[RMDB]
RNA sequence: GGGAACGACUCGAGUAGAGUCGAAAAUCAAAUGAGAACUUUGAAGACUGAAGUGGGGAAAGGUUCCACGUCAACAGCAGUUGGACGUGGGUUAGUCGAUCCUAAGAGAUGGUUUCAAAGGCCUGACAGGCCACCAUCGAAAGGGAAUCCGGUUAAGGGAUAUCCUGAAGUUCGCUUCAGGAUAUCCAAAAGAAACAACAACAACAAC
Reactivity to 2A3 in 0.01 (KOAc 150mM, MgCl2 10mM, bicine 150mM(pH8.5), 24C), signal-to-noise 1, nucleotides 027 to 156: u090c010a010a010a060u250g040a070g040a120a050c040u110u090u130g080a070a010g050a040c040u130g050a100a000g050u110g030g070g000g000a070a080a050g050g000u080u060c050c020a000c000g000u000c000a030a030c000a050g260c000a070g010u040u040g060g050a020c000g000u020g000g000g000u020u030a010g010u000c030g010a020u010c000c010u050a090a020g030a000g000a030u000g000g000u090u200u190c190a050a040a020g010g000c000c020u070g110a060c100a070g000g010c000c010a010c000c000a000u000c010g020a010a000a050g010g000g020a010a020u070c080c070g030g020u060u030a060a010g150
Reactivity to DMS in 0.01 (KOAc 150mM, MgCl2 10mM, bicine 150mM(pH8.5), 24C), signal-to-noise 1, nucleotides 027 to 156: u010c020a010a130a110u010g000a270g010a070a100c040u020u000u000g030a110a140g010a150c020u000g010a020a070g050u000g030g000g000g000a000a050a080g030g020u000u000c040c000a010c020g020u020c000a020a050c000a100g060c110a110g010u020u000g020g000a090c000g050u000g030g000g010u010u010a120g000u020c000g020a140u020c000c000u000a140a080g000a300g000a030u000g050g000u000u000u000c010a070a120a040g010g020c010c000u000g050a200c100a250g000g000c000c000a000c000c020a010u000c000g020a080a160a140g000g000g030a050a100u010c050c090g010g050u000u000a090a120g050
Overview: An RNA of 207 nucleotides, treated with 2A3 and DMS and read out base by base. It was measured as part of the RMDB library PDB130. For 2A3 the reverse transcriptase was SuperScript II with manganese. The RNA was probed in 150 mM KOAc, 10 mM MgCl2 and 150 mM bicine (pH 8.5) at 24 C. Reactivities are given for positions 27 through 156.